[RMDB]
Structure probing data (2A3 and DMS) for a 177-nucleotide construct. Conditions: 150 mM KOAc, 10 mM MgCl2 and 150 mM bicine (pH 8.5), 24 C. The data come from the RNA Mapping Database (RMDB), library OK1LIB. The 2A3 profile rests on 1,052 reads.

RNA sequence: GGGAACGACUCGAGUAGAGUCGAAAAGCCAGCUGCUGCACGAUGUACCUCCACAGGGAGAUCAUUUGUCGUGGUGGAGUCAUAUAAUAGCGCAGCGGAUCCAGAUGCGAGUGCAGCGAGAUAUGAAGGUCAUCCCUAGUUUCGACUAGGGAUGACCAAAAGAAACAACAACAACAAC
Reactivity to 2A3 in 0.01 (KOAc 150mM, MgCl2 10mM, bicine 150mM(pH8.5), 24C), signal-to-noise 2, nucleotides 027 to 126: g080c000c000a000g010c000u010g000c000u030g020c000a000c010g070a030u090g000u090a100c070c000u090c030c000a080c030a100g050g230g060a160g020a010u100c140a240u090u120u150g220u030c030g030u090g040g000u030g020g020a010g010u090c030a000u120a000u040a250a180u130a070g130c070g000c080a060g000c000g000g010a090u130c020c010a040g070a110u020g020c050g040a000g000u040g020c000a000g000c040g040a040g000a030u190a080u250g050a260a020
Reactivity to DMS in 0.01 (KOAc 150mM, MgCl2 10mM, bicine 150mM(pH8.5), 24C), signal-to-noise 1, nucleotides 027 to 126: g000c010c020a300g000c050u010g010c000u000g020c000a080c000g020a000u010g010u000a020c210c010u000c000c010a010c230a150g060g050g000a100g000a040u000c000a080u080u000u070g000u000c120g040u060g090g000u000g000g060a060g020u020c030a200u020a110u060a060a080u050a180g000c010g000c020a070g000c000g000g000a110u000c110c130a110g030a130u000g000c000g000a040g000u000g030c000a040g000c000g000a120g000a080u070a020u000g000a070a090